The record gives the reactivity of an RNA of 177 nucleotides to DMS and 2A3. Conditions: 150 mM KOAc, 10 mM MgCl2 and 150 mM bicine (pH 8.5), 24 C. For 2A3, 6,040 sequencing reads were counted. It was measured as part of the RMDB library OK1LIB. DMS adducts were read by reverse transcription with MarathonRT.
RNA sequence: GGGAACGACUCGAGUAGAGUCGAAAAGCGUCUUCGUGGACAAGCGACACCAGUUCAUUUGUGCCGAGCAUGAUGGACACAAUUCAACCGUAUCUACCGGACACAACAUCUCCGCAUUAUAUGCGGCUGUAGUUGCAUGGUUCGCCAUGCAACUACAAAAAGAAACAACAACAACAAC
Reactivity to DMS in 0.01 (KOAc 150mM, MgCl2 10mM, bicine 150mM(pH8.5), 24C), signal-to-noise 3, nucleotides 027 to 126: g000c170g060u000c020u000u010c110g020u040g000g000a070c110a150a110g000c070g020a060c080a130c180c080a090g000u020u060c060a040u000u010u050g020u000g030c010c140g050a130g020c010a000u010g030a040u020g000g020a030c070a090c220a100a130u020u020c150a180a170c030c020g000u040a040u000c110u010a040c110c010g000g000a080c060a090c170a100a090c080a070u050c100u000c050c000g000c000a010u030u020a050u040a130u000g040c040g020g000c270
Reactivity to 2A3 in 0.01 (KOAc 150mM, MgCl2 10mM, bicine 150mM(pH8.5), 24C), signal-to-noise 5, nucleotides 027 to 126: g030c030g050u020c050u130u110c060g090u110g020g030a050c070a110a020g020c030g030a010c010a040c050c010a020g010u090u080c020a050u020u050u190g030u050g010c030c050g040a050g020c030a050u080g020a030u070g040g040a020c020a000c030a060a110u140u110c030a060a070c000c020g070u080a080u040c030u050a060c040c000g050g030a030c030a000c010a080a130c020a120u100c050u020c050c000g000c020a020u090u190a160u210a060u300g020c000g010g000c000